RNA sequence: GGGAACGACUCGAGUAGAGUCGAAAAGUAGACGUAGACCCGCAGAGUCCGUUUGUCGUGCAACUGCAAAAGAGCUUCCCGCAAUUUGAGGUAGUAGCACAGCAGGUCACUCCAAAUGACCAUGCUACGUUGGUAUCUGAUUCGUCAGAUACCAACGAAAAGAAACAACAACAACAAC
Reactivity to DMS in 0.01 (KOAc 150mM, MgCl2 10mM, bicine 150mM(pH8.5), 24C), signal-to-noise 5, nucleotides 027 to 126: g000u020a030g030a060c060g010u010a060g010a120c020c020c020g020c080a080g000a160g000u000c020c050g050u010u020u000g010u010c040g020u030g010c030a090a050c020u000g020c040a040a060a090a060g020a190g010c030u000u000c040c030c010g000c130a050a070u010u000u000g010a130g010g000u020a030g020u010a040g010c040a040c100a050g000c070a030g000g000u000c010a030c070u010c160c180a060a090a140u010g000a020c000c000a070u000g030c010u000a090
Reactivity to 2A3 in 0.01 (KOAc 150mM, MgCl2 10mM, bicine 150mM(pH8.5), 24C), signal-to-noise 5, nucleotides 027 to 126: g060u030a020g010a040c050g010u010a020g040a040c010c000c000g000c040a030g010a010g050u030c030c030g010u010u070u100g120u080c030g010u010g030c050a130a090c040u020g000c010a020a070a070a060g070a030g020c010u020u020c010c000c010g040c070a110a170u110u080u140g070a060g050g030u060a030g010u010a010g040c030a010c030a070g060c010a010g000g020u020c010a020c030u070c050c060a000a080a100u060g000a000c000c010a060u050g000c000u030a030
Source information: This 177-nucleotide RNA was probed chemically with DMS and 2A3. Source: RMDB libraries RFM100 and RFMREP, as collected in RNAgym. The reactions ran in a buffer of 150 mM KOAc, 10 mM MgCl2 and 150 mM bicine (pH 8.5), at 24 C. 2A3 adducts were read by reverse transcription with SuperScript II with manganese. DMS adducts were read by reverse transcription with MarathonRT. High DMS reactivity at an A or C suggests that its Watson-Crick edge is free.